[RMDB]
RNA sequence: GGGAACGACUCGAGUAGAGUCGAAAACGGGAAGCGGACCUGCGAACUGGUAUUAUUGUUGGGUUCGUAACUCAAUAAAUUACCCUAGCGCUUAAAAACACUCACCUCCCGCAACCACUUCCGGGUAGAACUAAACUAUGUUCGCAUAGUUUAGUUCAAAAGAAACAACAACAACAAC
Reactivity to 2A3 in 0.01 (KOAc 150mM, MgCl2 10mM, bicine 150mM(pH8.5), 24C), signal-to-noise 4, nucleotides 027 to 126: c030g020g000g000a040a010g010c010g020g020a040c020c030u030g010c020g030a080a040c070u070g040g030u120a080u180u040a110u070u110g040u040u050g020g000g000u040u030c060g020u080a000a010c000u000c020a010a020u070a040a030a030u040u070a070c000c010c020u020a040g010c030g020c040u100u080a090a120a020a050a010c030a020c040u050c020a060c020c010u020c000c010c000g000c020a050a040c020c010a040c040u060u000c020c010g060g030g030u040a070
Reactivity to DMS in 0.01 (KOAc 150mM, MgCl2 10mM, bicine 150mM(pH8.5), 24C), signal-to-noise 4, nucleotides 027 to 126: c140g000g010g010a050a240g020c010g010g010a060c110c050u000g020c030g000a090a100c160u010g000g010u000a050u010u010a130u010u010g020u000u000g010g000g000u000u000c240g020u020a090a120c010u010c010a040a070u010a020a030a130u000u000a050c020c010c110u010a070g010c040g010c040u010u000a030a040a070a120a060c110a060c100u010c070a070c050c040u000c010c010c030g000c090a050a070c020c020a070c110u000u000c020c020g000g010g020u000a110